Structure probing data (DMS and 2A3) for a 177-nucleotide construct. For 2A3, 1,217 sequencing reads were counted. Conditions: 150 mM KOAc, 10 mM MgCl2 and 150 mM bicine (pH 8.5), 24 C.

RNA sequence: GGGAACGACUCGAGUAGAGUCGAAAAACUCUGGACGGAUCCGGAUCCGUUCCGUCCACGAUGUCUGUAAGAACCUUAGGUUCGCUGCUACGUCCGGUCUUCAGAAUGGAAGCGGUGAAUGGAUCCAUCGGACCGAAGAAUUCGUUCUUCGGUCCGAAAAAGAAACAACAACAACAAC
Reactivity to DMS in 0.01 (KOAc 150mM, MgCl2 10mM, bicine 150mM(pH8.5), 24C), signal-to-noise 1, nucleotides 027 to 126: a080c020u000c030u010g010g000a060c020g000g010a010u000c090c100g000g000a010u010c000c000g000u000u000c010c000g010u010c000c010a030c210g010a020u010g010u000c080u020g020u010a090a100g000a030a080c040c030u000u010a160g010g000u000u000c000g000c030u010g000c050u000a150c070g000u000c030c020g010g000u000c050u010u020c070a070g010a050a060u000g020g010a080a040g000c040g010g030u000g000a110a040u010g020g000a020u000c000c000a160
Reactivity to 2A3 in 0.01 (KOAc 150mM, MgCl2 10mM, bicine 150mM(pH8.5), 24C), signal-to-noise 2, nucleotides 027 to 126: a000c030u010c040u020g000g000a010c010g000g000a010u000c090c100g000g000a020u070c000c000g050u030u000c010c030g000u010c010c010a020c130g030a040u230g050u070c080u050g180u130a140a030g040a050a040c050c000u120u110a100g010g010u070u020c010g000c010u090g040c000u050a060c080g100u010c010c010g030g100u020c020u090u100c040a250g050a300a090u150g040g000a060a020g010c030g020g010u050g030a050a070u100g020g000a020u020c000c000a030